Chemical mapping of a 177-nucleotide RNA with DMS and 2A3.
The RNA was probed in 150 mM KOAc, 10 mM MgCl2 and 150 mM bicine (pH 8.5) at 24 C.
DMS adducts were read by reverse transcription with MarathonRT.
It was measured as part of the RMDB library OK1LIB.
RNA sequence: GGGAACGACUCGAGUAGAGUCGAAAAGAAAGCGCGAAUCGUCCGGUUGGCCGGAUUGCUAAAGUGCGAGCGAAGCUCGCAGGAACAGGAAAUGCCGGGCACGGCAAACUGCGGUGAGAGCGCGAAAGGGUUUAGAAUAGUUCGCUAUUCUAAACCCAAAAGAAACAACAACAACAAC
Reactivity to DMS in 0.01 (KOAc 150mM, MgCl2 10mM, bicine 150mM(pH8.5), 24C), signal-to-noise 2, nucleotides 027 to 126: g000a190a060a160g020c000g010c030g020a110a130u020c000g010u000c000c010g000g000u010u010g000g000c000c000g000g010a040u000u020g040c000u000a070a060a200g010u000g030c030g030a040g110c000g030a170a160g050c020u000c000g020c020a020g000g000a100a120c130a090g030g010a120a090a090u020g010c000c020g010g000g000c040a110c000g000g010c000a030a010a020c010u010g000c100g020g010u000g000a030g000a300g000c010g040c000g000a040a090a180
Reactivity to 2A3 in 0.01 (KOAc 150mM, MgCl2 10mM, bicine 150mM(pH8.5), 24C), signal-to-noise 5, nucleotides 027 to 126: g080a030a080a010g000c000g000c000g050a200a090u010c000g010u000c010c000g000g010u010u030g030g020c000c010g050g120a120u040u200g000c010u070a140a060a050g140u040g010c010g010a000g030c130g160a220a030g010c000u000c000g000c010a000g020g060a090a070c100a110g050g090a090a180a090u200g130c010c010g000g000g000c020a000c000g000g000c010a010a000a020c010u010g000c050g030g020u010g000a020g000a000g010c000g000c000g000a030a000a000